This 177-nucleotide RNA was probed chemically with DMS and 2A3. The reactions ran in a buffer of 150 mM KOAc, 10 mM MgCl2 and 150 mM bicine (pH 8.5), at 24 C. Values cover nucleotides 27 to 126.
RNA sequence: GGGAACGACUCGAGUAGAGUCGAAAAGGGGUGUGCUGAUUUAAAAACAGAAAAUGCAAAGUUGGACUGAAAAUAUCCCACGUCUUCUAAGCAAUCUGCUUAAGGCUUCCAAACUUACCUUAAUUUGUUCUCACAAGAGAUUCGUCUCUUGUGAGAAAAAAGAAACAACAACAACAAC
Reactivity to DMS in 0.01 (KOAc 150mM, MgCl2 10mM, bicine 150mM(pH8.5), 24C), signal-to-noise 3, nucleotides 027 to 126: g010g000g000g030u000g020u020g000c010u000g000a080u030u010u030a050a080a060a080a100c050a070g000a030a050a130a080u000g020c090a030a100a080g000u000u020g030g000a020c100u010g000a040a030a090a140u000a080u000c030c040c010a080c150g010u000c020u000u010c050u000a050a210g010c010a070a070u010c110u020g000c010u000u010a060a070g000g000c020u000u000c030c030a030a050a070c110u030u010a090c030c080u000u000a060a110u000u010u010g020
Reactivity to 2A3 in 0.01 (KOAc 150mM, MgCl2 10mM, bicine 150mM(pH8.5), 24C), signal-to-noise 2, nucleotides 027 to 126: g000g040g000g010u080g030u080g060c020u050g020a200u030u030u100a110a060a030a010a020c030a020g080a070a030a010a000u030g040c020a020a120a040g010u030u070g080g020a020c000u000g060a040a040a030a070u120a050u020c000c010c010a010c030g040u000c000u110u000c010u020a010a000g000c010a000a100u080c030u090g020c020u040u020a010a020g020g000c000u000u070c020c000a060a020a020c000u060u110a060c050c000u060u100a040a020u140u060u150g070